Conditions: 150 mM KOAc, 10 mM MgCl2 and 150 mM bicine (pH 8.5), 24 C. An RNA of 177 nucleotides, treated with DMS and 2A3 and read out base by base. The 2A3 profile rests on 1,984 reads. DMS adducts were read by reverse transcription with MarathonRT. 2A3 is a SHAPE reagent: it acylates the 2'-hydroxyl of flexible nucleotides of all four kinds. For DMS, 2,700 sequencing reads were counted. Reactivities are rounded to 0.1 and cut off at 0 and 3. Reactivities are given for positions 27 through 126.
RNA sequence: GGGAACGACUCGAGUAGAGUCGAAAACAUAUCAAUGCCGAUGCACCACCACUGGUGGGCGAACAUCUGGAGAAACUGGUUGCCGAGCACUAUAGCGUCCAGAAAACUAUCGCUCGUAUGGAACGUCACUCCUAGCUAGUUUCGACUAGCUAGGAGUAAAAGAAACAACAACAACAAC
Reactivity to DMS in 0.01 (KOAc 150mM, MgCl2 10mM, bicine 150mM(pH8.5), 24C), signal-to-noise 4, nucleotides 027 to 126: c060a050u000a060u010c150a080a070u020g010c050c020g010a050u000g030c060a150c020c010a040c030c010a160c200u010g010g050u010g000g020g010c060g010a060a110c100a070u000c030u000g020g010a090g010a040a100a100c110u000g000g000u010u020g000c030c050g000a060g000c070a030c120u010a050u010a090g020c070g030u000c000c010a110g000a040a070a060a120c100u000a050u000c050g020c010u010c050g010u000a090u000g000g010a050a070c090g010u010c230
Reactivity to 2A3 in 0.01 (KOAc 150mM, MgCl2 10mM, bicine 150mM(pH8.5), 24C), signal-to-noise 3, nucleotides 027 to 126: c040a060u170a060u130c080a110a150u190g060c040c010g050a030u080g020c030a080c060c010a030c000c010a190c240u140g030g020u040g000g030g040c030g030a030a040c030a050u000c030u180g050g010a040g070a040a100a030c070u030g060g010u080u060g020c070c020g100a050g060c050a020c100u080a060u060a190g080c020g040u050c030c010a040g000a020a120a000a010c080u060a070u150c070g010c070u000c040g050u070a080u110g080g040a070a040c000g000u040c090